[RMDB]
RNA sequence: GGGAACGACUCGAGUAGAGUCGAAAAAUCAUGUCAGGCCAUCUUUUGAAACUCUUUUCUGCAAUGCUACUGAAGUAUUUAUGCACGUGACCUGUGCUCUUCUGUCAGUCUAGGGGUGCUGGCUGAGCGAAUCAGCUUGAUUCGUCAAGCUGAUUCGAAAAGAAACAACAACAACAAC
Reactivity to 2A3 in 0.01 (KOAc 150mM, MgCl2 10mM, bicine 150mM(pH8.5), 24C), signal-to-noise 4, nucleotides 027 to 126: a000u070c040a020u100g040u050c030a020g030g010c030c010a050u020c040u080u200u070u150g070a110a080a050c040u050c000u120u090u070u050c020u040g050c050a060a110u070g040c020u010a050c020u050g040a050a010g030u050a080u090u220u050a110u190g010c010a010c060g060u080g120a090c040c040u050g030u030g040c000u020c010u080u000c010u030g050u050c020a010g010u000c020u050a020g000g000g020g030u040g080c000u000g010g000c010u010g000a000g050
Reactivity to DMS in 0.01 (KOAc 150mM, MgCl2 10mM, bicine 150mM(pH8.5), 24C), signal-to-noise 4, nucleotides 027 to 126: a080u010c050a050u010g010u000c040a060g010g020c040c020a050u010c050u020u000u000u000g000a100a090a100c190u010c060u020u000u000u000c030u010g030c120a080a070u000g010c040u000a110c090u000g000a060a040g010u000a060u020u010u010a060u020g000c030a040c040g000u000g010a110c130c090u000g020u000g010c030u000c060u000u000c040u000g000u000c050a030g010u000c080u000a100g020g010g000g010u000g020c040u000g020g000c030u000g010a050g020
An RNA of 177 nucleotides, treated with 2A3 and DMS and read out base by base. 2A3 adducts were read by reverse transcription with SuperScript II with manganese. As a SHAPE reagent, 2A3 marks flexible, mostly unpaired nucleotides at the ribose 2'-OH. Source: RMDB library OK2TRN, as collected in RNAgym. The RNA was probed in 150 mM KOAc, 10 mM MgCl2 and 150 mM bicine (pH 8.5) at 24 C. For 2A3, 4,774 sequencing reads were counted. DMS adducts were read by reverse transcription with MarathonRT.